The record gives the reactivity of an RNA of 177 nucleotides to DMS and 2A3. Reactivities are given for positions 27 through 126. It was measured as part of the RMDB library TTRDEL. For 2A3 the reverse transcriptase was SuperScript II with manganese.

RNA sequence: GGGAACGACUCGAGUAGAGUCGAAAAGAUAUGGAGAGAGAACUACGCUUAAGUAGCGUUUGACGUCGGAAACGACCGAGCUACCAUAGCGCUCUCUCCUAAGUCAAAAGACCUGUUCGCAGGUCAACGUUGUUGAUCAGUUCGCUGAUCAACAACGAAAAGAAACAACAACAACAAC
Reactivity to DMS in 0.01 (KOAc 150mM, MgCl2 10mM, bicine 150mM(pH8.5), 24C), signal-to-noise 2, nucleotides 027 to 126: g010a010u000a300u000g000g000a000g000a060g020a010g010a140a070c160u010a300c030g000c030u000u000a280a090g000u000a000g030c000g030u000u000u030g000a120c300g030u000c000g010g010a070a050a190c010g000a000c000c070g020a040g000c000u000a000c000c040a120u000a020g010c000g020c000u000c000u000c000u000c000c000u000a000a030g000u010c050a030a050a130a090g000a020c010c000u010g020u000u000c130g020c000a030g000g000u020c010a060a090
Reactivity to 2A3 in 0.01 (KOAc 150mM, MgCl2 10mM, bicine 150mM(pH8.5), 24C), signal-to-noise 2, nucleotides 027 to 126: g020a030u050a030u110g000g000a000g000a000g020a000g000a120a040c140u190a030c300g010c010u130u030a230a000g000u010a010g010c020g030u060u230u210g120a070c070g000u000c000g030g000a020a060a060c000g020a000c000c000g020a040g010c000u010a010c000c000a150u110a090g000c000g000c000u000c000u000c000u000c000c000u000a010a000g030u030c010a050a000a040a070g020a010c000c010u000g040u080u090c300g000c040a010g030g000u000c010a010a020